Structure probing data (2A3 and DMS) for a 207-nucleotide construct. For DMS the reverse transcriptase was MarathonRT. For 2A3 the reverse transcriptase was SuperScript II with manganese.
[RMDB]
RNA sequence: GGGAACGACUCGAGUAGAGUCGAAAAUAAUUUCCGGGAGCGUGUACGGAGUAAGAGCAAGGGAAAUCCCGGCGUGGUUUAAUUAUGUACGAAAGUGUCUUCGUCUCAUCCCGUGAGAAGCGGUUACUACUAGAUAUUCAUUCUUACUUUCUUCGUACGUAAAAUUUAGGUUCGCCUAAAUUUUACGAAAAGAAACAACAACAACAAC
Reactivity to 2A3 in 0.01 (KOAc 150mM, MgCl2 10mM, bicine 150mM(pH8.5), 24C), signal-to-noise 2, nucleotides 027 to 156: u070a000a050u010u070u010c000c000g010g050g000a030g060c060g050u090g050u080a010c020g020g020a000g050u090a040a050g030a040g080c030a030a080g130g000g020a130a070a070u080c010c010c020g020g020c020g010u040g030g000u090u040u050a020a060u080u150a050u130g040u040a010c000g040a060a050a100g120u100g050u080c020u000u000c030g030u020c020u000c030a050u030c070c000c000g010u080g020a100g030a060a000g020c030g010g010u020u060a030c030u020a020c020u020a020g020a090u050a130u160u140c060a050u030u010c010u040u060a120c000u050u060u010c000u040u020c060g080u060a040
Reactivity to DMS in 0.01 (KOAc 150mM, MgCl2 10mM, bicine 150mM(pH8.5), 24C), signal-to-noise 1, nucleotides 027 to 156: u000a090a140u000u000u000c070c010g020g000g010a060g010c080g030u000g000u010a070c040g000g030a160g020u000a040a080g010a160g000c070a060a090g010g060g000a080a070a130u000c020c000c010g030g010c020g020u000g030g000u010u000u000a080a170u000u000a110u000g040u010a090c060g020a070a060a080g000u000g020u000c050u010u000c030g030u000c010u010c000a110u000c010c040c030g000u020g020a040g000a060a170g020c000g000g020u010u010a070c030u000a090c070u010a100g000a040u000a120u000u000c020a070u010u010c030u000u000a090c040u000u000u000c010u020u000c040g020u010a160
For 2A3, 965 sequencing reads were counted. Reactivities are given for positions 27 through 156.